[RMDB]
RNA sequence: GGGAACGACUCGAGUAGAGUCGAAAACGCUGGGAAUCGUAACAUCUGGAGCGACGUACUGAAGCGCGCACGGUACUAUCGCGAUGAAAGUGGAUUCCUGUGCUGAAGCGCGCACGGCAACCGAAAGGUGCGAAAUCGUAUGGUUCGCCAUACGAAACAAUAGCAAGGACUUCGGUCCUUGCUAUUGAAAAGAAACAACAACAACAAC
Reactivity to DMS in 0.01 (KOAc 150mM, MgCl2 10mM, bicine 150mM(pH8.5), 24C), signal-to-noise 3, nucleotides 027 to 156: c110g010c030u020g000g000g030a010a040u000c020g010u010a180a160c110a160u000c050u000g040g000a260g000c000g020a040c160g040u010a050c010u000g020a060a060g010c000g070c000g040c000a280c000g010g000u000a040c030u000a140u000c010g000c030g010a120u010g000a130a150a110g010u000g030g010a060u000u000c030c000u000g010u000g020c020u000g020a120a100g010c030g040c020g030c030a050c040g010g000c080a120a120c000c010g020a090a200a240g000g010u010g000c020g010a060a110a110u010c010g010u010a020u000g010g000u000u010c300g040c010c000a000u010a020c000g000a040a080a220
Reactivity to 2A3 in 0.01 (KOAc 150mM, MgCl2 10mM, bicine 150mM(pH8.5), 24C), signal-to-noise 7, nucleotides 027 to 156: c070g010c030u080g000g000g030a000a010u020c040g080u280a100a120c040a150u200c050u080g060g020a030g000c000g000a010c000g000u010a000c010u010g050a250a050g010c000g000c010g000c000a020c020g000g010u000a000c010u030a030u060c000g010c020g110a170u060g060a050a040a010g050u080g070g000a000u000u010c000c010u030g040u080g000c050u130g040a080a020g000c000g000c000g000c000a000c010g060g000c030a090a130c010c010g050a100a040a030g000g010u020g020c020g020a060a050a090u030c000g000u000a000u000g010g060u010u080c220g050c070c000a000u010a010c000g000a020a010a010